[RMDB]
RNA sequence: GGGAACGACUCGAGUAGAGUCGAAAAAUGGCUCGAUGGGAGAUCUGACUGAUUCUGCCUACGCGAUGGCUACGCUGUUUGCGCUGGACCGCUACGACGCAAAGGCGGUGCUGGGGCAUUAUGUCGGUCUAACGCUGUACUUCGGUACAGCGUUAGAAAAAGAAACAACAACAACAAC
Reactivity to 2A3 in 0.01 (KOAc 150mM, MgCl2 10mM, bicine 150mM(pH8.5), 24C), signal-to-noise 2, nucleotides 027 to 126: a020u110g020g020c010u000c080g070a060u020g030g020g000a010g040a070u020c040u090g050a050c030u080g000a120u200u010c030u060g100c040c010u050a050c110g050c040g080a060u110g050g000c000u000a060c050g020c040u040g040u180u060u120g040c130g000c020u020g030g020a060c000c020g000c040u090a030c060g140a040c050g010c220a070a090a030g000g020c000g010g010u060g070c040u020g000g040g020g030c050a020u110u120a070u090g090u050c020g000g040
Reactivity to DMS in 0.01 (KOAc 150mM, MgCl2 10mM, bicine 150mM(pH8.5), 24C), signal-to-noise 3, nucleotides 027 to 126: a040u000g010g030c020u010c010g000a090u010g000g020g000a080g000a040u010c030u000g020a120c100u000g000a090u010u000c090u010g010c000c030u010a100c120g040c050g010a090u010g010g010c030u000a160c080g010c030u000g010u010u010u000g020c030g000c020u010g010g010a080c050c000g010c050u010a120c090g000a070c090g000c130a060a060a160g000g010c000g000g020u010g000c050u010g010g000g010g010c060a050u010u000a050u010g000u000c030g020g010